RNA sequence: GGGAACGACUCGAGUAGAGUCGAAAAUGUGGGGGUUUUCUUCCUGGCCCUAAGUCUCGGAGCAGCAAACACAGUGACCCAGAAGGGUGCGCAAGUCCUCAGUAAGGCUGCCUCUACUUUGGACGAAUAACGGUAUAGACUUCGGUCUAUACCGUUAAAAAGAAACAACAACAACAAC
Reactivity to DMS in 0.01 (KOAc 150mM, MgCl2 10mM, bicine 150mM(pH8.5), 24C), signal-to-noise 3, nucleotides 027 to 126: u010g030u020g020g030g000g000g010u010u010u020u010c080u000u000c020c040u010g000g010c010c020c030u000a080a120g000u010c030u000c080g000g020a170g010c090a030g040c050a120a100a090c140a070c090a080g010u010g010a110c010c020c040a140g020a110a070g000g020g010u000g000c090g010c130a110a090g000u000c010c000u000c040a050g010u000a050a090g000g010c040u010g000c040c010u000c020u000a030c050u010u000u000g010g010a010c020g020a130a130
The record gives the reactivity of an RNA of 177 nucleotides to DMS. Conditions: 150 mM KOAc, 10 mM MgCl2 and 150 mM bicine (pH 8.5), 24 C. The data come from the RNA Mapping Database (RMDB), library OK2TST.